[RMDB]
RNA sequence: GGGAACGACUCGAGUAGAGUCGAAAAUAUGAAGACCGCAUCUUGGACUUUAAAGUUCUUGAUAAUGGUAUCAUUAGGGAUGUAAAUCCUGAUGAUAAGUGCUUUGCUAAUAAGCACCGGUCCUUCACCAUACCACAUGGUUCGCCAUGUGGUAUGGAAAAGAAACAACAACAACAAC
Reactivity to 2A3 in 0.01 (KOAc 150mM, MgCl2 10mM, bicine 150mM(pH8.5), 24C), signal-to-noise 3, nucleotides 027 to 126: u250a030u030g010a010a000g000a000c010c000g000c020a030u000c000u020u020g010g020a010c000u010u110u300a180a300a030g000u020u000c000u010u020g040a040u080a200a110u110g030g000u000a010u020c000a000u010u040a090g050g000g040a020u100g060u300a010a080a120u040c000c010u010g010a000u000g000a000u000a020a020g000u000g000c000u000u050u080g040c030u080a140a080u040a140a040g000c010a000c000c010g000g000u080c120c000u000u020c020a030
Reactivity to DMS in 0.01 (KOAc 150mM, MgCl2 10mM, bicine 150mM(pH8.5), 24C), signal-to-noise 2, nucleotides 027 to 126: u010a140u000g010a030a020g030a040c000c000g000c050a050u000c010u010u000g010g000a010c010u000u000u010a090a100a050g010u000u000c000u000u010g020a140u020a070a080u000g010g000u010a000u000c000a000u000u010a090g020g000g020a030u010g010u000a110a100a060u000c000c000u000g000a000u010g000a000u000a020a070g010u000g000c010u000u000u010g010c300u010a060a110u000a010a010g020c000a000c000c000g000g000u000c070c060u000u000c010a130
Structure probing data (2A3 and DMS) for a 177-nucleotide construct.
For DMS, 1,763 sequencing reads were counted.
2A3 adducts were read by reverse transcription with SuperScript II with manganese.
The reactions ran in a buffer of 150 mM KOAc, 10 mM MgCl2 and 150 mM bicine (pH 8.5), at 24 C.